Source information: Source: RMDB library 15KREP, as collected in RNAgym. Chemical mapping of a 177-nucleotide RNA with DMS. The DMS profile rests on 626 reads. Values cover nucleotides 27 to 126.
RNA sequence: GGGAACGACUCGAGUAGAGUCGAAAAAAGUUGAUAUGGAUUUACUCCGAGGAGACGAACUACCACGAACAGGGGAGACUCUACCCGUGGCGUCUCCGUUUGACGAGUAAGUCCUGAGUCAACAAAAGCAAUAAUGAAACUUCGGUUUCAUUAUUGCAAAAGAAACAACAACAACAAC
Reactivity to DMS in 0.01 (KOAc 150mM, MgCl2 10mM, bicine 150mM(pH8.5), 24C), signal-to-noise 1, nucleotides 027 to 126: a130a100g000u000u000g000a010u000a300u000g000g000a020u000u000u000a000c010u000c000c010g000a080g000g020a020g020a000c000g040a070a060c040u000a300c010c010a020c010g020a010a300c180a000g000g000g000g000a220g000a210c000u000c010u010a130c200c030c010g010u000g000g000c000g000u010c000u000c000c000g000u000u000u000g010a230c300g000a000g000u000a000a010g000u000c000c000u000g000a020g000u000c000a000a000c050a060a110a170a030
The RNA was probed in 150 mM KOAc, 10 mM MgCl2 and 150 mM bicine (pH 8.5) at 24 C.